[RMDB]
The record gives the reactivity of an RNA of 207 nucleotides to 2A3 and DMS. High 2A3 reactivity points to a flexible backbone, as in loops and unpaired stretches. Values cover nucleotides 27 to 156. 2A3 adducts were read by reverse transcription with SuperScript II with manganese. For DMS, 3,251 sequencing reads were counted. For DMS the reverse transcriptase was MarathonRT.
RNA sequence: GGGAACGACUCGAGUAGAGUCGAAAAUGGGACUGAGACAUAGACAUAGGCCGAUCAUGAAACUGGAAGGGACUUGAAAACCAUCAAGUUUAAUCCCCUUAUACAGAUGGGGAAAUUGAGCCCCAGGUGGGGAGGGGAGUGACUCGCCCCAGAUCACCAUGCUCUAGAUUUUCGAAUCUAGAGCAUGAAAAGAAACAACAACAACAAC
Reactivity to 2A3 in 0.01 (KOAc 150mM, MgCl2 10mM, bicine 150mM(pH8.5), 24C), signal-to-noise 3, nucleotides 027 to 156: u110g030g010g000a000c060u070g020a050g010a060c010a070u090a050g030a010c030a070u170a070g080g030c030c010g010a050u090c020a060u110g110a090a050a030c030u020g020g020a010a030g060g000g030a010c020u010u060g020a040a070a000a050c020c000a030u050c030a040a000g000u030u020u070a020a020u020c010c000c000c010u050u160a110u050a150c080a010g110a120u090g020g010g010g000a000a060a080u110u110g040a040g030c000c000c000c000a020g080g090u050g030g000g030g000a010g010g000g000g000a020g000u030g030a020c020u010c030g050c010c000c000c000a020g050a030u060c010a020c090
Reactivity to DMS in 0.01 (KOAc 150mM, MgCl2 10mM, bicine 150mM(pH8.5), 24C), signal-to-noise 2, nucleotides 027 to 156: u000g010g000g000a120c000u000g000a160g010a100c040a100u000a140g020a080c040a130u000a080g010g050c040c020g000a130u000c040a110u010g000a050a070a100c040u010g010g030a100a130g020g010g050a100c050u000u010g010a020a080a060a130c040c060a100u010c040a030a090g000u000u000u000a110a130u020c020c000c010c010u000u000a100u000a190c080a160g010a090u030g000g020g000g000a010a020a080u000u010g030a130g000c000c020c000c010a050g010g000u000g010g020g040g000a020g010g020g010g000a110g020u000g020a060c060u010c040g000c030c010c010c000a100g030a100u000c040a110c080